[RMDB]
RNA sequence: GGGAACGACUCGAGUAGAGUCGAAAAUCCGAUUCGUCGGACUAAGCACCUUUGUGAUAAUGGUGAGUUGUCAGGCUAAACUGUCCCAUUGGGACAGCACUAGCCUUGGAUUUACUCACCCACUUAUCACUCUGGUAGAGAGACUGUUCGCAGUCAACAACGGGUACACCUUCGGGUGUACCCGUUGAAAAGAAACAACAACAACAAC
Reactivity to 2A3 in 0.01 (KOAc 150mM, MgCl2 10mM, bicine 150mM(pH8.5), 24C), signal-to-noise 1, nucleotides 027 to 156: u010c000c000g000a010u040u080c160g030u030c010g060g020a080c100u160a000a130g150c040a000c040c000u020u020u000g000u000g000a000u010a020a010u300g020g020u000g000a000g000u020u010g000u000c000a000g030g000c020u010a020a050a110c000u040g010u010c100c030c120a300u300u300g000g000g020a000c000a000g000c040a050c070u000a000g020c000c000u000u060g110g000a040u120u190u180a010c000u000c010a000c000c000c000a040c000u000u000a000u010c000a000c000u000c000u010g050g010u270a050g000a030g000a020g000a080c000u010g010u050u070c110g010c040a000g030u030c000a010a020